[RMDB]
RNA sequence: GGGAACGACUCGAGUAGAGUCGAAAACCGAGGGGACCGUCCCCUCGGUAAUGGCGAAUGGGACCCAGAAAUCUCUCUAGAUUCCCAGAGAGAAUCGAGAGAAAGCUGGCUCUCCCUUAGCCAUCCGGAUAUAUUGUUGGUUCGCCAACAAUAUAUCAAAAGAAACAACAACAACAAC
Reactivity to 2A3 in 0.01 (KOAc 150mM, MgCl2 10mM, bicine 150mM(pH8.5), 24C), signal-to-noise 3, nucleotides 027 to 126: c010c000g000a010g050g040g000g000a070c110c060g300u170c040c010c010c010u000c000g000g000u000a000a010u010g000g010c000g020a040a020u030g010g000g000a010c040c000c000a000g020a030a200a050u020c000u000c000u010c020u050a080g000a020u010u010c030c060c180a070g020a000g000a010g000a170a010u000c010g010a000g000a000g000a010a020a020g030c000u000g010g010c000u010c000u000c000c000c000u000u010a000g000c000c000a010u000c010c010g020
Reactivity to DMS in 0.01 (KOAc 150mM, MgCl2 10mM, bicine 150mM(pH8.5), 24C), signal-to-noise 4, nucleotides 027 to 126: c000c000g010a010g010g000g010g020a290c300c300g000u010c010c000c000c010u010c000g000g000u000a010a010u000g000g010c010g000a180a090u000g000g010g010a020c220c010c000a000g000a040a070a240u000c010u000c000u000c000u000a160g010a030u000u000c000c010c080a170g010a200g010a160g000a010a010u000c020g010a030g000a010g010a020a060a080g010c000u000g000g000c020u000c060u000c000c010c000u000u000a300g000c000c000a020u000c010c020g000